[RMDB]
RNA sequence: GGGAACGACUCGAGUAGAGUCGAAAAGAUAUGGACUGAAGAAGCGAUGAAAUACCAGACCCUCGGAAACGAGUCUCUGGUAUGGAGCUUCUCAGUCCUAAGUCAAAGAGCUCCUUCGGGAGCUCAACAAGAUUUACCUGUUCGCAGGUAAAUCUUGAAAAGAAACAACAACAACAAC
Reactivity to 2A3 in 0.01 (KOAc 150mM, MgCl2 10mM, bicine 150mM(pH8.5), 24C), signal-to-noise 1, nucleotides 027 to 126: g030a020u060a000u090g000g000a000c010u000g080a190a070g000a020a000g290c020g080a220u130g020a190a190a010u020a010c000c000a000g010a040c030c030c030u010c010g040g000a020a070a060c020g030a010g000u000c010u030c000u050g000g010u020a000u020g020g000a000g000c000u020u020c000u000c000a000g000u000c000c010u010a010a030g020u000c020a060a140a050g000a000g010c000u010c000c000u030u010c180g120g000g000a040g000c030u010c000a000a000
Reactivity to DMS in 0.01 (KOAc 150mM, MgCl2 10mM, bicine 150mM(pH8.5), 24C), signal-to-noise 2, nucleotides 027 to 126: g000a000u000a300u010g010g000a000c010u000g000a100a100g010a000a010g040c000g010a080u040g010a100a130a020u000a020c010c000a010g040a010c070c060c010u010c010g020g000a080a070a120c000g000a000g010u000c100u010c020u000g010g000u000a010u000g020g010a090g000c000u000u010c000u000c000a000g000u000c000c000u000a000a050g000u000c030a090a150a110g010a010g030c000u000c000c010u000u030c200g010g020g000a020g000c010u000c000a010a070